RNA sequence: GGGAACGACUCGAGUAGAGUCGAAAAUAAUAAGGUAUAGCCUGUGGGGGUGCCAUACAGCGUUAUACAAAAGUAUAAAAGAAAGGCUAGGUCAUGAAACAGCCUUUGCCACCCUUGUGGUUAAGUGCACCAUACUAAAAUUCGUUUUAGUAUGGUGAAAAGAAACAACAACAACAAC
Reactivity to 2A3 in 0.01 (KOAc 150mM, MgCl2 10mM, bicine 150mM(pH8.5), 24C), signal-to-noise 6, nucleotides 027 to 126: u190a010a030u120a080a030g100g000u020a020u030a020g010c010c010u020g000u030g010g010g020g050g140u190g260c020c010a040u050a080c000a000g010c030g070u020u000a010u000a020c010a000a120a020a030g120u100a090u080a270a110a010a020g090a040a030a000g010g000c020u050a040g070g070u110c080a130u130g080a090a070a040c010a010g000c000c000u010u020u020g020c000c000a020c070c030c070u030u200g020u020g040g040u060u070a100a030g060u070g100
Reactivity to DMS in 0.01 (KOAc 150mM, MgCl2 10mM, bicine 150mM(pH8.5), 24C), signal-to-noise 9, nucleotides 027 to 126: u010a080a100u010a100a140g020g010u000a020u000a030g010c000c000u000g020u000g010g000g000g010g030u010g020c030c030a100u000a030c030a020g010c170g010u000u000a010u000a010c000a060a090a080a160g010u000a060u000a040a040a060a070g010a040a040a030g010g010c010u000a060g020g010u000c120a130u000g010a110a100a100c180a050g000c010c000u000u000u000g000c030c010a040c020c110c060u000u010g010u000g000g010u000u010a040a090g020u010g010
An RNA of 177 nucleotides, treated with 2A3 and DMS and read out base by base. For 2A3, 10,160 sequencing reads were counted. 2A3 adducts were read by reverse transcription with SuperScript II with manganese.